[RMDB]
The data come from the RNA Mapping Database (RMDB), library TTRDEL. Chemical mapping of a 177-nucleotide RNA with 2A3 and DMS. For DMS the reverse transcriptase was MarathonRT. The reactions ran in a buffer of 150 mM KOAc, 10 mM MgCl2 and 150 mM bicine (pH 8.5), at 24 C.
RNA sequence: GGGAACGACUCGAGUAGAGUCGAAAAGAUAUGGAUUCAUGGAGCUCGUUCCUCGGAAACGAGGGAUGGAGCUAUGAAGUGACGGUCCUAAGUCGAGGGAUUGGACAUGUUCGCAUGUCCAAUCCAACAUCACAGCAAGAUUCGUCUUGCUGUGAUGAAAAGAAACAACAACAACAAC
Reactivity to 2A3 in 0.01 (KOAc 150mM, MgCl2 10mM, bicine 150mM(pH8.5), 24C), signal-to-noise 4, nucleotides 027 to 126: g020a010u090a040u160g060g020a020u060u060c010a020u050g220g260a070g090c000u010c010g010u000u030c010c000u010c000g010g000a050a040a020c010g000a000g000g000g040a010u120g160g030a000g030c020u050a140u020g010a010a010g040u020g050a050c210g120g060u010c020c010u050a110a030g040u030c040g020a170g160g000g000a000u010u000g000g000a000c000a000u000g030u020u140c300g020c160a000u000g000u000c000c000a000a000u000c000c000a000a000
Reactivity to DMS in 0.01 (KOAc 150mM, MgCl2 10mM, bicine 150mM(pH8.5), 24C), signal-to-noise 8, nucleotides 027 to 126: g000a050u000a250u010g000g010a070u000u000c010a010u000g000g000a020g020c000u000c000g010u000u000c000c000u010c000g010g000a060a060a100c010g020a020g000g010g010a000u000g020g010a010g020c100u000a040u010g010a160a150g000u000g010a050c300g010g000u000c000c010u010a060a090g010u000c020g010a100g010g010g000a020u000u000g010g000a010c000a010u000g000u010u010c240g020c000a000u000g000u000c000c010a000a000u000c000c010a030a090